An RNA of 207 nucleotides, treated with 2A3 and DMS and read out base by base. Values cover nucleotides 27 to 156. The 2A3 profile rests on 6,186 reads.
[RMDB]
RNA sequence: GGGAACGACUCGAGUAGAGUCGAAAACAACGCAUUCAGUUCAAGGACUACCUGCGCAGCAACCAGCUGCACCGCGAGGUGUCCGUGGCCGUGCGCUAUGCGAAGGAUACUCCGCGCAAGACGCAACUCCUGCGCGACUACUUCGCAUCGGCUGUGGUAAGUUUUCCUAUUUCGAUAGGAAAACUUAAAAAGAAACAACAACAACAAC
Reactivity to 2A3 in 0.01 (KOAc 150mM, MgCl2 10mM, bicine 150mM(pH8.5), 24C), signal-to-noise 6, nucleotides 027 to 156: c050a030a010c030g020c050a090u120u150c080a070g040u100u100c060a100a080g000g000a030c050u150a070c080c010u010g010c030g000c010a000g000c010a100a200c130c060a080g000c000u010g010c060a080c040c120g020c050g140a020g020g000u020g000u000c000c000g000u010g010g000c020c010g060u060g020c040g000c030u020a010u010g000c010g000a010a000g020g030a040u080a190c030u050c070c020g000c000g000c010a030a010g020a020c050g030c200a060a100c060u010c010c010u000g000c000g010c000g020a020c030u080a010c000u010u000c000g000c000a010u020c030g030g000c030u080g020u100g100g050
Reactivity to DMS in 0.01 (KOAc 150mM, MgCl2 10mM, bicine 150mM(pH8.5), 24C), signal-to-noise 4, nucleotides 027 to 156: c010a070a020c010g000c000a050u000u010c050a040g030u010u000c050a070a070g040g020a030c010u010a060c010c000u010g020c020g030c000a090g020c030a130a220c180c190a200g020c040u000g020c040a050c070c100g010c060g010a080g020g030u010g010u000c100c000g010u000g000g010c000c060g000u000g030c010g000c010u000a040u010g010c010g010a030a010g000g010a300u000a060c030u000c020c010g010c010g040c000a020a050g010a060c030g020c210a060a120c140u000c000c020u000g010c000g020c010g000a130c040u000a090c020u000u020c010g000c000a030u000c150g030g010c010u000g010u010g000g010
Conditions: 150 mM KOAc, 10 mM MgCl2 and 150 mM bicine (pH 8.5), 24 C. Source: RMDB library OK3TST, as collected in RNAgym.